[RMDB]
RNA sequence: GGGAACGACUCGAGUAGAGUCGAAAAAUAUGGAAGAAUUACGGAAGAUUAUCGUAAUAGUGUGGAUAAACUUCCAACGGAAAAUGCUCAUUAUUUGACUGAUGUGCCAGAUGUACUCACUGUUGCACAUGACUACUGACUUCGGUCAGUAGUCAUGAAAAGAAACAACAACAACAAC
Reactivity to DMS in 0.01 (KOAc 150mM, MgCl2 10mM, bicine 150mM(pH8.5), 24C), signal-to-noise 2, nucleotides 027 to 126: a030u010a070u000g000g010a080a060g000a110a050u020u000a080c100g010g020a010a060g000a130u000u000a020u000c010g030u010a070a180u010a100g010u000g040u020g010g000a010u010a020a030a110c020u000u000c000c010a150a160c200g020g000a030a040a070a050u000g000c030u000c020a040u010u000a100u010u010u000g010a120c110u000g010a030u010g000u000g000c050c010a020g010a070u000g020u020a080c090u030c050a040c060u010g010u010u010g020c110a070
Reactivity to 2A3 in 0.01 (KOAc 150mM, MgCl2 10mM, bicine 150mM(pH8.5), 24C), signal-to-noise 2, nucleotides 027 to 126: a000u150a070u160g020g050a080a060g000a040a090u160u060a040c110g050g010a040a000g040a090u070u000a010u100c030g050u080a050a080u050a220g220u100g080u120g150g010a040u020a040a090a010c000u010u000c050c000a040a030c040g100g000a100a030a000a020u110g010c000u000c020a040u020u160a070u130u050u130g120a070c080u030g030a020u060g030u020g040c000c000a030g070a110u100g010u140a120c000u040c040a050c060u070g040u090u060g000c000a020

Source information:
This 177-nucleotide RNA was probed chemically with DMS and 2A3. For 2A3 the reverse transcriptase was SuperScript II with manganese. Reactivities are rounded to 0.1 and cut off at 0 and 3. The reactions ran in a buffer of 150 mM KOAc, 10 mM MgCl2 and 150 mM bicine (pH 8.5), at 24 C. For DMS the reverse transcriptase was MarathonRT.